[RMDB]
RNA sequence: GGGAACGACUCGAGUAGAGUCGAAAAACAGUACCAGCUGCUACGGCAGCUGGUACUGAAAUUUCAUGGAGUUAAGAAACCACGUAAACAAAGCGGAACCGAAAAGCUAAACGAGUAGGAAGAAUAAAUAGGUACCACCACUUCGGUGGUGGUACAACACAGUGGAAUACUUCGGUAUUCCACUGUGAAAAGAAACAACAACAACAAC
Reactivity to 2A3 in 0.01 (KOAc 150mM, MgCl2 10mM, bicine 150mM(pH8.5), 24C), signal-to-noise 1, nucleotides 027 to 156: a000c030a000g000u040a000c010c020a000g000c050u020g000c020u020a030c240g160g000c000a000g000c010u000g000g000u000a000c000u000g000a000a000a000u000u040u060c070a030u090g080g050a100g040u150u190a080a130g040a100a050a000c010c000a070c060g030u130a040a080a160c060a000a100a000g000c010g010g030a060a010c020c000g100a000a010a000a020g020c020u130a300a000a000c000g000a000g000u030a020g090g050a060a050g080a020a110u200a080a090a040u080a050g080g050u000a000c000c000a010c000c000a000c010u000u030c200g050g000u000g000g000u000g010g010u000a000c000a000a010